[RMDB]
RNA sequence: GGGAACGACUCGAGUAGAGUCGAAAAAGUCGCUUCGGCGACUCUCUUAGAUAUGGAUGCAACAGAGUGCCUGAACUACAGUGGCAUGUCGGAAACGACAUGCACUGCAGGCACGACGAAGUUGCAUCCUAAGUCACAAUCGGCCGUUCGCGGCCAAGAUCAUGAGUGAAUUCGUUCACUCAUGAUCAAAAGAAACAACAACAACAAC
Reactivity to DMS in 0.01 (KOAc 150mM, MgCl2 10mM, bicine 150mM(pH8.5), 24C), signal-to-noise 1, nucleotides 027 to 156: a010g010u010c010g030c000u010u010c300g090g050c000g010a010c000u000c000u000c030u000u030a180g000a070u000a230u000g020g000a040u000g000c010a000a010c030a140g000a270g010u000g010c010c010u000g030a140a210c040u020a110c000a000g000u000g050g020c010a000u000g000u000c000g030g000a070a080a300c000g000a030c030a000u000g020c010a010c010u020g020c030a030g020g010c010a020c010g000a150c150g000a140a210g040u000u000g000c000a030u010c010c000u000a000a050g030u010c020a150c060a110a100u000c090g000g010c020c000g030u000u020c200g060c020g010g020c010c020a010a160
Reactivity to 2A3 in 0.01 (KOAc 150mM, MgCl2 10mM, bicine 150mM(pH8.5), 24C), signal-to-noise 4, nucleotides 027 to 156: a000g010u010c010g000c030u050u110c270g120g000c000g010a010c000u000c010u000c000u060u220a070g010a010u050a020u080g000g000a000u000g000c000a010a000c010a030g070a030g140u000g010c010c000u020g020a070a050c080u150a050c270a010g010u060g220g050c000a030u000g000u000c000g020g000a030a020a020c010g000a000c000a000u000g000c000a000c000u000g010c010a000g000g000c000a000c000g000a000c000g030a080a040g000u000u000g000c000a000u000c000c000u000a010a000g010u010c000a010c070a120a170u200c090g000g000c000c000g040u080u080c210g010c010g050g000c000c000a010a020